Conditions: 150 mM KOAc, 10 mM MgCl2 and 150 mM bicine (pH 8.5), 24 C. An RNA of 177 nucleotides, treated with 2A3 and read out base by base.
RNA sequence: GGGAACGACUCGAGUAGAGUCGAAAAGCUGACCCACACGCUGCUUUCCACCGCCGUUAACAACAUGAUGCUGCGGGACCGCUGGAGCCUGGUGGCCGAGCGGCGGCGGCAGGCCGGGAUCGCCGGACUCUGCCAACCCCUUCGGGGGUUGGCAGAGAAAAGAAACAACAACAACAAC
Reactivity to 2A3 in 0.01 (KOAc 150mM, MgCl2 10mM, bicine 150mM(pH8.5), 24C), signal-to-noise 1, nucleotides 027 to 126: g040c080u090g110a120c050c000c030a010c000a050c160g090c050u010g040c000u000u130u050c000c000a000c020c000g040c060c000g150u040u090a180a050c080a020a020c010a120u240g000a040u070g050c000u100g100c060g060g000g000a010c010c020g130c100u040g000g080a120g050c120c000u180g180g040u020g010g110c050c000g040a000g010c000g000g040c000g000g000c000g000g050c000a020g010g010c000c000g170g040g040a250u160c070g010c080c000g110g000a060

Overview: Source: RMDB library OK1LIB, as collected in RNAgym.